This 207-nucleotide RNA was probed chemically with DMS and 2A3. 2A3 adducts were read by reverse transcription with SuperScript II with manganese. For DMS the reverse transcriptase was MarathonRT. The data come from the RNA Mapping Database (RMDB), library RNAMAK. The reactions ran in a buffer of 150 mM KOAc, 10 mM MgCl2 and 150 mM bicine (pH 8.5), at 24 C. The DMS profile rests on 2,444 reads.
[RMDB]
RNA sequence: GGGAACGACUCGAGUAGAGUCGAAAAGCUACACUUCGGUGUAGCAAAAACCGUAGGUCAUACGAUUCGCACACGAGGCAAUUCGAAAGAGUUGCUCCCCACCGUGUGAACUACGAAGAGUAUGACCUAAACGGAAAAAGGGACCUUCGGGUCCCAACCUUAGCAACAAGUUCGCUUGUUGCUAAGGAAAAGAAACAACAACAACAAC
Reactivity to DMS in 0.01 (KOAc 150mM, MgCl2 10mM, bicine 150mM(pH8.5), 24C), signal-to-noise 1, nucleotides 027 to 156: g000c010u010a000c000a000c000u000u010c300g080g000u000g020u000a040g000c000a000a050a090a180a030c030c000g040u010a060g010g000u000c010a050u000a040c010g000a300u000u000c000g000c000a130c040a040c040g000a300g000g000c000a000a020u000u000c010g000a210a090a300g000a020g040u000u000g000c000u010c060c030c040c160a300c140c040g000u010g030u020g000a070a170c070u010a100c030g000a020a030g010a300g000u000a000u010g000a070c090c000u000a000a020a070c020g000g000a030a080a080a110a240g000g030g010a010c010c000u000u010c230g040g010g020u010c010c000c000a000a000
Reactivity to 2A3 in 0.01 (KOAc 150mM, MgCl2 10mM, bicine 150mM(pH8.5), 24C), signal-to-noise 3, nucleotides 027 to 156: g010c000u010a000c020a010c010u050u190c300g100g000u010g000u000a000g000c000a030a000a050a010a000c010c000g000u020a020g000g000u000c000a000u000a010c000g030a080u020u010c060g000c010a010c000a000c010g000a000g000g020c010a010a000u000u010c010g040a120a050a020g010a050g010u000u000g010c030u060c020c000c010c010a040c020c000g000u010g010u000g010a100a070c080u200a060c110g010a000a000g000a000g000u000a000u000g000a000c050c000u000a000a000a010c000g000g050a030a040a030a070a130g050g000g010a000c010c040u060u090c300g130g020g000u000c000c000c000a000a000